[RMDB]
RNA sequence: GGGAACGACUCGAGUAGAGUCGAAAACUUAUACUUUUAUAACCUUUCUUUAUUCAGUGGUGAAGGCAUAAGUCCAGGUAGACUGACAAAUACUAAGUUAGCUUGUCCAAGGCUGUGGUGAUUCCUGGAGGUUAAACUCUGUAGUAUCCAGAGUGUACUUUUAAAUAGUGUUCGCACUAUUUAAAAGAAAAGAAACAACAACAACAAC
Reactivity to DMS in 0.01 (KOAc 150mM, MgCl2 10mM, bicine 150mM(pH8.5), 24C), signal-to-noise 3, nucleotides 027 to 156: c040u000u000a070u000a030c010u000u000u000u010a120u000a170a060c030c020u000u010u000c040u010u000u000a110u040u000c060a060g040u010g000g040u010g020a080a050g010g000c040a030u000a030a060g020u000c020c040a080g020g040u010a050g000a050c020u000g000a090c030a050a080a120u000a110c090u000a070a190g010u000u010a040g020c020u000u000g010u000c010c050a080a110g030g020c010u000g010u010g000g030u000g010a210u000u000c010c010u000g000g000a110g020g040u000u000a060a080a060c020u000c000u000g010u000a160g020u000a120u000c130c000a060g020a070g030u010g020u000a070
Reactivity to 2A3 in 0.01 (KOAc 150mM, MgCl2 10mM, bicine 150mM(pH8.5), 24C), signal-to-noise 3, nucleotides 027 to 156: c040u160u150a070u200a250c090u220u210u100u110a190u180a220a140c060c030u100u120u100c060u080u270u170a290u160u140c100a100g030u050g100g020u030g060a040a020g040g000c030a020u060a140a040g010u030c020c020a000g020g000u050a040g030a100c040u040g010a000c030a020a090a000u110a080c070u110a020a160g090u060u050a010g020c030u040u050g030u010c030c020a050a050g050g000c020u030g020u030g040g060u050g010a070u050u020c010c010u060g000g020a000g030g000u000u050a060a050a030c000u010c000u010g050u040a060g070u020a070u000c040c010a000g010a000g010u010g010u070a080